[RMDB]
RNA sequence: GGGAACGACUCGAGUAGAGUCGAAAAACGCAGGAUUCAGGGGAGGGCUCAAACUUUGCUGAAUCCUGCAGAACAUUCCCACAUUUGAAAACCCCAUAAUCCUUUAAAAGUUUUAUGUGUAAACUCUCGUAGAUGUUUGUUUCGACAAACAUCUACGAAAAGAAACAACAACAACAAC
Reactivity to 2A3 in 0.01 (KOAc 150mM, MgCl2 10mM, bicine 150mM(pH8.5), 24C), signal-to-noise 2, nucleotides 027 to 126: a000c030g020c000a020g010g000a010u000u010c000a000g040g000g030g000a010g000g070g010c070u070c120a030a090a090c010u030u010u080g050c000u000g000a000a000u000c000c000u010g020c000a000g000a020a020c030a040u030u010c000c000c000a060c060a040u070u040u010g040a050a080a050a050c020c000c000c000a010u020a020a010u060c040c030u070u130u130a140a200a060a000g010u020u000u000u000a000u040g080u000g130u180a000a090a270c080u040c010u000